[RMDB]
RNA sequence: GGGAACGACUCGAGUAGAGUCGAAAAGAUAUGGACUCCCGGAGGACAUGCUUAGCCUUUCGGAAACGAAAGCUAAGCAACAGCCUCUGGGAGUCCUAAGUCAAAGGUUUUCCUUCGGGAAAACCAACAAAGUUCAUUACUUCGGUAAUGAACUUUGAAAAGAAACAACAACAACAAC
Reactivity to DMS in 0.01 (KOAc 150mM, MgCl2 10mM, bicine 150mM(pH8.5), 24C), signal-to-noise 3, nucleotides 027 to 126: g000a010u000a300u010g010g000a020c010u000c000c000c000g020g010a020g000g010a050c140a200u010g010c000u010u000a000g010c210c100u000u020u000c010g020g000a050a070a150c010g000a000a000a000g000c000u000a000a010g010c000a010a030c240a130g000c010c000u000c000u000g000g000g000a000g000u000c000c000u000a010a030g010u010c010a110a120a160g010g010u000u000u000u000c000c000u000u010c260g030g000g000a000a000a020a010c000c000a060a090
The record gives the reactivity of an RNA of 177 nucleotides to DMS. Source: RMDB library TTRDES, as collected in RNAgym. For DMS the reverse transcriptase was MarathonRT.